[RMDB]
RNA sequence: GGGAACGACUCGAGUAGAGUCGAAAAGAACAUCAGUUCGCUGAUGUUCAAAGGCCGAGUAGUGUUGGGUCCCGAAAGGCCAUACAUAAACAUUCACUCAGAAAACAACGUCCUUCGGGACGUUGAACGUACAUACCACCUUCGGGUGGUAUGUACGAAAAGAAACAACAACAACAAC
Reactivity to 2A3 in 0.01 (KOAc 150mM, MgCl2 10mM, bicine 150mM(pH8.5), 24C), signal-to-noise 2, nucleotides 027 to 126: g010a000a000c000a000u000c000a000g040u050u090c140g030c080u010g000a000u010g000u010u000c010a010a010a020g030g000c020c010g010a010g040u060a020g000u000g090u070u070g100g090g180u060c030c000c000g050a050a030a000g030g050c000c000a000u080a030c060a050u200a010a040a040c030a060u110u100c060a040c050u030c010a050g130a090a060a040a040c000a010a000c000g000u020c010c000u030u110c200g030g000g000a000c000g000u000u010g000a000a000
Reactivity to DMS in 0.01 (KOAc 150mM, MgCl2 10mM, bicine 150mM(pH8.5), 24C), signal-to-noise 2, nucleotides 027 to 126: g020a010a000c000a020u000c000a010g040u000u000c200g010c000u000g010a000u000g000u000u000c000a060a080a130g020g000c020c010g010a080g000u030a090g030u000g020u010u000g000g000g020u000c000c000c030g000a040a100a200g000g010c020c000a040u000a090c180a100u000a080a050a050c080a080u000u010c100a040c060u000c040a120g000a010a100a030a160c020a000a000c000g010u000c000c000u000u020c280g020g010g000a000c000g000u000u000g000a030a100